[RMDB]
RNA sequence: GGGAACGACUCGAGUAGAGUCGAAAAGCAUAUGGCUUCGGCCAUAUGCAAAGACAAGAGGAGGAAGGUGGCUUGUCAAAUAACCACCAAUAAAAAUAAAUAAAAUCUGACGGUUCGCCGUCAGAAACAAUUAAUGAGUCUUCGGACUCAUUAAUUGAAAAGAAACAACAACAACAAC
Reactivity to DMS in 0.01 (KOAc 150mM, MgCl2 10mM, bicine 150mM(pH8.5), 24C), signal-to-noise 2, nucleotides 027 to 126: g010c000a010u000a000u000g000g010c010u000u000c240g070g000c000c000a000u010a000u000g010c000a010a060a060g000a100c070a010a090g000a070g010g000a150g020g020a120a120g000g010u000g020g000c020u000u020g000u010c100a100a150a090u010a000a190c030c050a090c070c010a050a070u000a030a060a080a090a070u010a060a040a080u010a110a050a070a110u000c000u000g000a000c000g040g050u000u000c300g020c010c000g000u000c010a010g030a020a060a070
Reactivity to 2A3 in 0.01 (KOAc 150mM, MgCl2 10mM, bicine 150mM(pH8.5), 24C), signal-to-noise 1, nucleotides 027 to 126: g000c000a000u010a010u020g000g000c000u010u070c210g040g000c000c000a000u000a000u000g000c000a010a040a020g020a010c000a000a050g010a060g210g060a070g090g090a140a060g000g010u070g020g030c050u050u030g040u070c000a000a000a260u050a020a000c020c030a040c020c050a010a030u200a110a090a020a000a010u250a090a090a000u110a020a160a010a110u070c000u000g000a000c010g040g010u040u040c160g040c020c000g000u000c000a020g000a000a010a000